[RMDB]
RNA sequence: GGGAACGACUCGAGUAGAGUCGAAAAAAGGGGACAGCCUGCAGACACAAGUACACCUAGGCUGUAGUCUUACAGAGGUUCUUGCUUGUAAGACCUACUGUGUGCUUAGCACUGUGAGACCAGAGAACCACUACUACUCCUUCGGGAGUAGUAGUGGAAAAGAAACAACAACAACAAC
Reactivity to DMS in 0.01 (KOAc 150mM, MgCl2 10mM, bicine 150mM(pH8.5), 24C), signal-to-noise 2, nucleotides 027 to 126: a110a070g000g000g020g000a190c050a030g000c010c020u000g030c150a070g000a170c140a040c080a050a010g000u020a100c200a090c080c100u020a070g000g000c080u000g010u010a030g000u000c020u010u000a000c010a000g010a060g000g010u010u020c050u000u010g000c100u020u000g010u010a010a020g000a020c060c020u000a050c040u000g020u000g000u000g020c040u010u010a120g010c020a030c020u000g020u000g000a030g000a090c030c100a130g020a120g010a100a150
Reactivity to 2A3 in 0.01 (KOAc 150mM, MgCl2 10mM, bicine 150mM(pH8.5), 24C), signal-to-noise 1, nucleotides 027 to 126: a000a000g060g000g020g010a020c010a030g020c050c020u010g000c030a010g090a120c010a000c010a150a040g060u030a060c060a020c030c070u100a060g010g000c000u020g050u010a000g010u010c000u000u010a010c020a040g220a010g110g000u130u070c050u160u190g080c010u050u120g030u030a000a000g000a000c000c000u040a100c020u010g010u010g020u030g020c030u130u070a020g040c020a010c060u040g080u060g070a020g040a040c040c020a020g040a000g020a140a010